RNA sequence: GGGAACGACUCGAGUAGAGUCGAAAAGUUCGAACUCAAGAAGAGAAGAUUUUCGAGGAAAUACUCCCAAGAAGUUCCCGGAGGGAUCCAAGAGACGGACGACUUUCCCCCAUUGGUUGGGAAAAGUAAAGUCGUCGGUUCGCCGACGACAAAAGAAACAACAACAACAAC
Reactivity to DMS in 0.01 (KOAc 150mM, MgCl2 10mM, bicine 150mM(pH8.5), 24C), signal-to-noise 3, nucleotides 027 to 129: g030u010u010c040g000a020a020c080u040c030a130a040g030a090a060g020a040g020a160a000g000a040u070u020u020u010c010g030a140g050g010a060a170a110u000a090c070u000c080c040c090a030a020g030a020a250g000u030u000c030c010c040g080g020a080g000g000g000a070u000c050c080a120a050g010a000g050a080c090g000g070a060c030g010a030c010u000u000u000c000c020c000c040c060a050u140u110g010g010u030u090g020g000g030a020a030a070a030g030u120a000a040a030
Reactivity to 2A3 in 0.01 (KOAc 150mM, MgCl2 10mM, bicine 150mM(pH8.5), 24C), signal-to-noise 3, nucleotides 027 to 129: g000u030u030c010g020a120a050c000u000c040a060a020g110a100a020g020a090g000a130a030g010a070u020u000u010u000c020g010a050g000g010a080a140a000u050a020c020u000c020c050c020a000a030g050a030a000g010u010u010c010c000c000g000g010a000g020g000g000a040u040c060c030a060a010g070a000g010a000c040g110g020a000c010g000a000c010u000u000u000c010c020c020c050c000a160u080u240g200g010u130u040g020g040g000a000a070a060a010g090u120a030a010a030